[RMDB]
RNA sequence: GGGAACGACUCGAGUAGAGUCGAAAACUUAGUGAGUUCGCUCACUAAGGGACUCUGGAACCCAGGCUGGAGAGGGACCAAGUAGCAGGCUGGGCACCACCAACAUUCAGCGCUUCGGCGCUGAAAACCUAACGGAUUAAUUCGUUAAUCCGUUAGGAAAAGAAACAACAACAACAAC
Reactivity to DMS in 0.01 (KOAc 150mM, MgCl2 10mM, bicine 150mM(pH8.5), 24C), signal-to-noise 4, nucleotides 027 to 126: c000u000u000a000g010u010g010a010g020u000u010c250g020c010u000c010a000c010u000a000a010g010g000g010a170c090u010c040u000g010g010a170a130c030c010c010a030g010g000c000u000g010g010a110g000a120g010g000g010a130c080c040a080a100g010u010a070g010c020a050g000g020c030u010g020g000g020c120a060c030c040a060c090c060a040a070c140a150u000u000c000a000g010c000g000c020u000u010c230g020g000c000g000c010u010g000a010a010a070a160
Reactivity to 2A3 in 0.01 (KOAc 150mM, MgCl2 10mM, bicine 150mM(pH8.5), 24C), signal-to-noise 5, nucleotides 027 to 126: c000u010u000a010g000u010g010a000g010u020u120c180g090c110u010c000a000c000u000a000a000g010g000g020a030c030u030c060u090g050g030a040a050c010c000c010a020g090g000c010u030g010g110a130g040a100g140g080g040a050c050c070a120a050g040u060a050g150c020a010g060g040c000u010g000g000g000c030a030c000c020a020c010c020a020a080c010a060u010u040c000a000g000c000g020c030u050u100c230g090g000c000g000c000u010g000a000a000a000a000
Chemical mapping of a 177-nucleotide RNA with DMS and 2A3. For DMS the reverse transcriptase was MarathonRT. The data come from the RNA Mapping Database (RMDB), library M2PK50. High 2A3 reactivity points to a flexible backbone, as in loops and unpaired stretches. Values are in units of 0.01, from 0 to 300, in steps of 10.